An RNA of 207 nucleotides, treated with DMS and 2A3 and read out base by base. 2A3 adducts were read by reverse transcription with SuperScript II with manganese. Conditions: 150 mM KOAc, 10 mM MgCl2 and 150 mM bicine (pH 8.5), 24 C. For DMS, 3,654 sequencing reads were counted. For DMS the reverse transcriptase was MarathonRT. Reactivities are given for positions 27 through 156.
RNA sequence: GGGAACGACUCGAGUAGAGUCGAAAAUAAGCUUCGGCUUAGCUCCCGGGGUCGACUCUCCCUCCCUUGGACCCAUGAACUACAGCUGAAGCCUCCACGGCUGCAUGGCUAGGGAGGAGAGUCGACGGAGGCACCCCCGUGCCGUAUUCGUACGGAAACGAAAUACAAUGUUCGCAUUGUAUUUCGUAAAAGAAACAACAACAACAAC
Reactivity to DMS in 0.01 (KOAc 150mM, MgCl2 10mM, bicine 150mM(pH8.5), 24C), signal-to-noise 2, nucleotides 027 to 156: u010a000a030g030c030u000u010c250g040g010c010u010u000a060g010c080u000c000c010c010g030g020g040g050u010c000g010a050c010u010c010u000c010c000c000u010c010c010c030u020u000g030g010a050c300c010c030a120u000g000a110a240c170u010a300c010a040g020c000u000g020a030a070g020c000c010u000c000c000a300c010g040g010c000u000g000c000a030u000g030g000c000u000a030g050g020g020a100g000g010a020g000a060g000u010c020g000a000c010g010g010a020g050g020c040a220c010c000c030c000c000g000u010g000c000c010g020u000a050u010u010c170g010u000a010c020g000g010a140a180
Reactivity to 2A3 in 0.01 (KOAc 150mM, MgCl2 10mM, bicine 150mM(pH8.5), 24C), signal-to-noise 2, nucleotides 027 to 156: u020a010a000g000c020u040u130c290g140g010c000u000u050a020g050c040u040c000c010c000g000g040g000g000u020c010g000a000c000u000c000u050c150c070c030u040c020c010c000u040u300g030g010a010c000c010c000a000u010g010a050a040c140u230a090c130a010g000c010u010g010a090a000g000c000c000u010c000c010a020c010g010g020c000u010g010c020a000u000g000g000c010u000a010g010g000g000a000g000g040a000g000a000g010u000c000g000a000c000g000g000a000g010g000c000a050c000c010c000c010c010g150u100g080c000c000g010u010a050u080u170c290g040u040a010c000g020g000a180a100